[RMDB]
RNA sequence: GGGAACGACUCGAGUAGAGUCGAAAACACCUUUCGAGGUGAGUAUUGGGGUCGAAGACGAACGAUCGAAGAACAUGAACUACAGCUGAAGCCUCCACGGCUGCAUGGGAGAUCGUUGUCUUCGACGGAGGCACCCCGCGAUAGCCUUCGGGCUAAACCUUAUCUUCACUUUCGAGUGAAGAUAAGGAAAAGAAACAACAACAACAAC
Reactivity to DMS in 0.01 (KOAc 150mM, MgCl2 10mM, bicine 150mM(pH8.5), 24C), signal-to-noise 2, nucleotides 027 to 156: c000a030c000c000u000u000u010c170g020a070g000g080u020g010a120g030u000a100u000u000g000g020g050g020u000c010g010a020a000g020a030c030g010a080a020c010g010a010u000c000g030a120a070g000a200a240c070a060u020g020a100a050c080u010a300c040a050g010c000u010g000a030a100g040c000c000u020c020c030a300c060g020g030c010u010g000c010a030u000g000g000g000a100g010a010u010c010g050u000u000g010u000c000u010u000c000g000a000c000g000g020a000g060g020c020a040c000c000c010c030g060c060g000a160u000a050g020c000c000u000u010c240g060g010g010c030u000a040a090a160
Reactivity to 2A3 in 0.01 (KOAc 150mM, MgCl2 10mM, bicine 150mM(pH8.5), 24C), signal-to-noise 5, nucleotides 027 to 156: c020a010c010c000u050u110u150c290g110a050g000g000u030g030a070g050u130a180u150u300g000g000g010g020u040c080g010a000a010g010a010c090g040a060a020c010g000a010u010c020g100a230a000g010a000a010c010a010u010g020a050a070c080u220a080c300a000g000c000u020g000a040a000g000c000c010u010c000c000a020c000g010g000c000u010g000c000a000u010g010g000g000a010g000a000u000c000g000u000u020g000u000c000u010u000c000g010a010c000g000g000a000g000g000c010a010c000c020c000c000g000c040g070a100u070a020g000c000c020u070u120c290g050g020g000c000u050a090a080a060